Chemical mapping of a 177-nucleotide RNA with DMS. Values cover nucleotides 27 to 126. The reactions ran in a buffer of 150 mM KOAc, 10 mM MgCl2 and 150 mM bicine (pH 8.5), at 24 C.
[RMDB]
RNA sequence: GGGAACGACUCGAGUAGAGUCGAAAAUGUGCCAAACGCUGUUAGACCCAACACCACCCAGGCCAGGUAGGGGGCUGGAGCCCAGGUGGGCUGCAGGGAAGGGGGCACUCUUCUGAGCAGACAGAUCCUCUGAAGAUAGCUUCGGCUAUCUUCAGAGAAAAGAAACAACAACAACAAC
Reactivity to DMS in 0.01 (KOAc 150mM, MgCl2 10mM, bicine 150mM(pH8.5), 24C), signal-to-noise 2, nucleotides 027 to 126: u010g020u000g030c030c020a070a110a120c140g050c040u000g000u000u000a110g000a130c020c040c040a120a130c080a140c030c030a080c020c010c030a110g040g020c030c010a030g010g000u020a100g000g000g000g000g000c030u010g020g010a130g010c000c000c070a180g000g010u000g050g030g010c030u000g010c060a020g010g000g000a070a050g030g020g030g020g010c180a080c020u000c020u000u010c030u000g020a300g000c030a030g000a170c050a080g010a100u000c090